The record gives the reactivity of an RNA of 177 nucleotides to DMS and 2A3.
2A3 adducts were read by reverse transcription with SuperScript II with manganese.
High DMS reactivity at an A or C suggests that its Watson-Crick edge is free.
Values are in units of 0.01, from 0 to 300, in steps of 10.
For DMS the reverse transcriptase was MarathonRT.

[RMDB]
RNA sequence: GGGAACGACUCGAGUAGAGUCGAAAAGAUAUGGAGUUGUAGGGAGCCUCGACAUCGGAAACGAUGUUAGAGGCAUCGAUCUACACCUCCUAAGUCAAAGCGUAGACGGCUUCGGCCGUCUACGCAACAGAAGCAUAAACUUCGGUUUAUGCUUCUGAAAAGAAACAACAACAACAAC
Reactivity to DMS in 0.01 (KOAc 150mM, MgCl2 10mM, bicine 150mM(pH8.5), 24C), signal-to-noise 2, nucleotides 027 to 126: g000a000u000a020u010g000g000a020g000u000u000g010u000a010g000g000g000a010g040c000c000u000c000g000a010c000a000u010c000g020g010a020a000a010c000g010a010u000g010u000u000a030g010a010g020g030c010a030u000c200g000a020u020c000u000a000c000a010c040c000u010c000c010u010a000a060g000u000c000a090a120a140g010c010g000u000a010g010a000c000g000g000c000u000u010c250g020g000c000c000g000u000c000u010a010c010g010c010a010a050
Reactivity to 2A3 in 0.01 (KOAc 150mM, MgCl2 10mM, bicine 150mM(pH8.5), 24C), signal-to-noise 1, nucleotides 027 to 126: g000a010u020a000u050g010g000a010g010u000u010g000u010a010g010g010g010a010g000c000c000u000c000g000a000c000a010u010c000g000g000a010a000a000c000g000a010u020g010u010u020a020g000a000g000g000c000a000u030c010g000a000u000c010u000a000c000a000c010c000u000c000c000u000a000a000g000u000c000a040a140a000g000c010g020u000a010g010a010c040g020g030c040u120u180c300g120g010c010c000g020u000c000u010a000c000g000c000a000a010